[RMDB]
RNA sequence: GGGAACGACUCGAGUAGAGUCGAAAAAGCCUCUAAUGAAAUUAUAGACUCAUCGGCUCAGGACCAUUGCGGUUGUGCAAAACGGUGUUAUUGCCGAGAAGGGAACGCAUGAGAGGUUGGUGAAAACGUUAGUUAUUGGGUUCGCCCAAUAACUAACAAAAGAAACAACAACAACAAC
Reactivity to DMS in 0.01 (KOAc 150mM, MgCl2 10mM, bicine 150mM(pH8.5), 24C), signal-to-noise 6, nucleotides 027 to 126: a060g000c000c010u000c010u010a080a010u000g010a060a100a130u020u050a090u010a110g000a180c010u000c070a280u000c010g010g000c010u010c190a100g000g010a030c000c000a160u000u000g010c050g010g000u020u030g020u020g000c010a010a010a060a100c160g010g010u000g030u010u010a090u030u010g010c000c000g000a010g010a120a100g000g000g000a080a090c260g000c010a010u000g000a030g000a020g000g000u010u010g010g000u010g000a090a060a080a070c200
Reactivity to 2A3 in 0.01 (KOAc 150mM, MgCl2 10mM, bicine 150mM(pH8.5), 24C), signal-to-noise 8, nucleotides 027 to 126: a000g010c010c000u000c010u030a030a020u030g080a050a040a060u270u160a160u080a190g060a080c010u020c070a080u010c060g000g000c020u020c050a040g080g060a010c000c010a010u000u010g000c010g130g100u220u140g090u210g090c000a000a010a030a030c090g020g010u070g080u220u090a130u100u100g000c000c000g010a010g020a040a050g020g010g020a050a030c020g000c040a010u010g020a000g000a000g020g050u020u050g060g060u120g070a070a060a000a020c060